About this RNA:
Structure probing data (DMS and 2A3) for a 177-nucleotide construct. In probing experiments dimethyl sulfate is read out at A N1 and C N3, which are open when not base-paired. The 2A3 profile rests on 3,276 reads. Reactivities are given for positions 27 through 126. The DMS profile rests on 942 reads. Reactivities are rounded to 0.1 and cut off at 0 and 3. Conditions: 150 mM KOAc, 10 mM MgCl2 and 150 mM bicine (pH 8.5), 24 C. For 2A3 the reverse transcriptase was SuperScript II with manganese.
RNA sequence: GGGAACGACUCGAGUAGAGUCGAAAAGACACGACGGAGACGUCGUGUCAAGUCCAGUGCGAAAGCACUGGACAAAUAAGGGCUGUUUUUCUCGCUGACUUUCAGCCCCAAAACAAAAAUGUCAGCAACCACUGCUGAUAUUCGUAUCAGCAGUGGUAAAAGAAACAACAACAACAAC
Reactivity to DMS in 0.01 (KOAc 150mM, MgCl2 10mM, bicine 150mM(pH8.5), 24C), signal-to-noise 1, nucleotides 027 to 126: g000a010c000a000c000g010a010c000g020g000a240g000a170c000g000u010c000g010u000g010u010c000a020a110g040u000c010c000a010g040u000g030c010g000a100a150a130g040c000a000c010u020g000g000a000c000a000a010a080u020a100a120g030g010g050c010u020g000u000u000u000u000u000c070u040c070g000c000u000g000a010c000u000u000u000c000a010g020c040c000c000c130a040a050a030a060c160a020a040a020a010a050u020g010u000c010a020g000c010a150
Reactivity to 2A3 in 0.01 (KOAc 150mM, MgCl2 10mM, bicine 150mM(pH8.5), 24C), signal-to-noise 1, nucleotides 027 to 126: g010a000c010a000c010g000a010c010g030g000a030g030a040c000g010u000c010g000u020g000u000c000a000a000g000u000c000c000a000g000u010g000c020g110a130a010a020g010c020a010c010u010g010g000a010c010a000a020a000u120a070a070g010g000g000c020u000g020u020u010u010u040u040c120u040c080g000c000u000g000a010c020u010u020u020c010a000g000c000c000c010c030a020a080a000a020c000a000a000a000a000a000u040g000u010c010a000g020c000a000